An RNA of 177 nucleotides, treated with 2A3 and read out base by base. The RNA was probed in 150 mM KOAc, 10 mM MgCl2 and 150 mM bicine (pH 8.5) at 24 C. Values cover nucleotides 27 to 126. The data come from the RNA Mapping Database (RMDB), library RFM100. For 2A3, 589 sequencing reads were counted.
[RMDB]
RNA sequence: GGGAACGACUCGAGUAGAGUCGAAAAAUACCUCUGUGUGUUCAGCAGACCCUCGCUGGAUUCAUGGAACCUCUUCUACACGUCGACAAGAUAUGUUUCUUGUAUUUAUGCCAGCCCGUCUUCAGGCGAGGUUGACCACAUUCGUGUGGUCAACCUCAAAAGAAACAACAACAACAAC
Reactivity to 2A3 in 0.01 (KOAc 150mM, MgCl2 10mM, bicine 150mM(pH8.5), 24C), signal-to-noise 1, nucleotides 027 to 126: a000u180a010c000c060u000c000u000g050u000g010u000g010u020u040c000a000g000c000a010g020a120c020c020c000u000c040g000c000u040g000g010a060u050u080c000a020u120g010g010a030a050c000c000u100c010u060u030c010u000a000c020a030c080g000u010c000g150a020c020a060a000g030a150u070a040u240g200u030u020u000c000u020u050g010u050a110u100u150u070a080u150g030c070c000a010g000c040c000c030g030u050c010u070u050c020a050g000g000c010